This 177-nucleotide RNA was probed chemically with 2A3 and DMS. Values are in units of 0.01, from 0 to 300, in steps of 10. Reactivities are given for positions 27 through 126. The 2A3 profile rests on 2,353 reads.
[RMDB]
RNA sequence: GGGAACGACUCGAGUAGAGUCGAAAAGAUAUGGACGGAGCGACGAUCUACGUAACAUCCUGUUCGGAAACGAACAGGUGGUAGGGAGCUCUGUCCUAAGUCAAAGAGCUUUCUUCGGAAAGCUCAACGUAGUGUCGGAGUUCGCUCCGACACUACGAAAAGAAACAACAACAACAAC
Reactivity to 2A3 in 0.01 (KOAc 150mM, MgCl2 10mM, bicine 150mM(pH8.5), 24C), signal-to-noise 1, nucleotides 027 to 126: g020a030u090a010u190g010g020a000c020g000g000a020g010c010g280a300c020g010a040u000c020u010a000c000g020u000a030a000c030a250u120c000c000u010g050u000u000c030g000g020a070a090a110c030g010a000a000c000a010g010g000u000g000g010u020a000g000g020g020a010g000c000u020c000u000g000u000c010c000u000a030a000g050u000c030a110a080a080g010a000g000c000u100u010u050c020u020u160c300g020g000a020a020a000g000c020u010c000a000a000
Reactivity to DMS in 0.01 (KOAc 150mM, MgCl2 10mM, bicine 150mM(pH8.5), 24C), signal-to-noise 2, nucleotides 027 to 126: g010a030u000a300u000g000g000a040c000g010g000a050g040c000g000a060c200g020a070u020c000u000a020c000g040u000a020a020c200a020u000c000c000u000g000u010u020c000g000g020a120a060a160c020g000a000a000c020a000g010g000u020g000g000u000a040g000g020g000a020g000c000u000c000u000g000u000c000c000u010a010a060g000u000c010a090a160a120g020a010g020c000u000u000u000c010u000u000c150g000g000a010a010a000g010c000u000c000a050a040
The reactions ran in a buffer of 150 mM KOAc, 10 mM MgCl2 and 150 mM bicine (pH 8.5), at 24 C.